[RMDB]
The record gives the reactivity of an RNA of 177 nucleotides to 2A3 and DMS. Reactivities are given for positions 27 through 126. For DMS, 1,350 sequencing reads were counted. It was measured as part of the RMDB library OK2TST. The reactions ran in a buffer of 150 mM KOAc, 10 mM MgCl2 and 150 mM bicine (pH 8.5), at 24 C. DMS adducts were read by reverse transcription with MarathonRT.
RNA sequence: GGGAACGACUCGAGUAGAGUCGAAAAGGCGCUCUAGCUGGCUUUGCCGCUUCCUUUUCUGCAGCCUGGUUGCCCUCAUGGAUACAGGGGUUCUCCUCCCUUGCUGAACAGGAGGCUCAAAUUUGGAGCUACCAACAGUGUUCGCACUGUUGGUAGCAAAAGAAACAACAACAACAAC
Reactivity to 2A3 in 0.01 (KOAc 150mM, MgCl2 10mM, bicine 150mM(pH8.5), 24C), signal-to-noise 1, nucleotides 027 to 126: g000g000c070g070c030u080c080u190a100g010c100u140g080g000c000u190u120u090g050c030c020g000c000u010u050c020c000u050u050u000u040c010u010g060c050a040g050c010c010u030g050g050u090u080g020c010c010c000u060c040a160u130g200g000a070u060a200c030a050g000g000g000g000u200u140c020u000c040c000u050c000c000c000u060u030g050c040u020g000a010a010c000a040g010g000a020g030g000c000u020c050a060a110a090u160u080u210g050g000a030
Reactivity to DMS in 0.01 (KOAc 150mM, MgCl2 10mM, bicine 150mM(pH8.5), 24C), signal-to-noise 2, nucleotides 027 to 126: g010g000c200g040c150u000c090u010a110g020c060u010g050g040c030u000u000u010g060c040c060g040c040u000u010c040c000u000u000u000u000c030u000g010c030a100g030c010c010u000g000g060u010u010g010c020c000c010u030c060a090u010g000g010a190u010a090c100a070g000g030g000g020u000u000c060u010c030c030u010c000c010c000u000u000g010c050u000g000a090a080c140a000g010g020a090g010g030c130u000c080a040a080a140u000u010u000g040g030a290